About this RNA:
The record gives the reactivity of an RNA of 177 nucleotides to 2A3 and DMS. Conditions: 150 mM KOAc, 10 mM MgCl2 and 150 mM bicine (pH 8.5), 24 C. 2A3 adducts were read by reverse transcription with SuperScript II with manganese. DMS adducts were read by reverse transcription with MarathonRT. The 2A3 profile rests on 870 reads. Values cover nucleotides 27 to 126.
RNA sequence: GGGAACGACUCGAGUAGAGUCGAAAAUGAUUUCGACCAGGGGUCGGACGCUGUGUACAGUCGGGAGUGGAAGAACUGGCCUGGAUAGAUGGUCUGUUUGGCGUGCCAUGGCACCACGAUGGGCAGCCGGGUAGGCAGAAUUCGUUCUGCCUACCCGAAAAGAAACAACAACAACAAC
Reactivity to 2A3 in 0.01 (KOAc 150mM, MgCl2 10mM, bicine 150mM(pH8.5), 24C), signal-to-noise 1, nucleotides 027 to 126: u250g030a060u020u050u090c020g000a010c000c020a070g020g050g000g080u000c000g040g000a060c060g030c100u040g060u000g030u100a080c020a050g020u000c000g030g020g000a130g030u110g040g070a120a110g020a110a020c010u060g000g050c030c070u020g070g070a130u050a130g110a030u080g010g000u040c060u060g000u040u040u120g080g010c170g020u000g000c000c050a080u130g100g000c060a000c060c000a060c060g050a030u040g030g000g000c020a000g030c090
Reactivity to DMS in 0.01 (KOAc 150mM, MgCl2 10mM, bicine 150mM(pH8.5), 24C), signal-to-noise 1, nucleotides 027 to 126: u000g010a160u000u010u000c030g020a050c010c020a290g000g020g030g020u000c000g000g020a120c170g040c040u010g010u000g010u030a070c070a090g010u000c070g000g000g000a030g040u000g000g010a110a100g000a050a080c070u010g010g000c040c030u010g010g020a140u000a120g000a090u000g010g010u000c020u000g010u000u010u010g010g020c120g010u010g010c050c040a070u000g000g020c030a070c020c040a060c040g000a070u010g000g000g000c030a030g020c190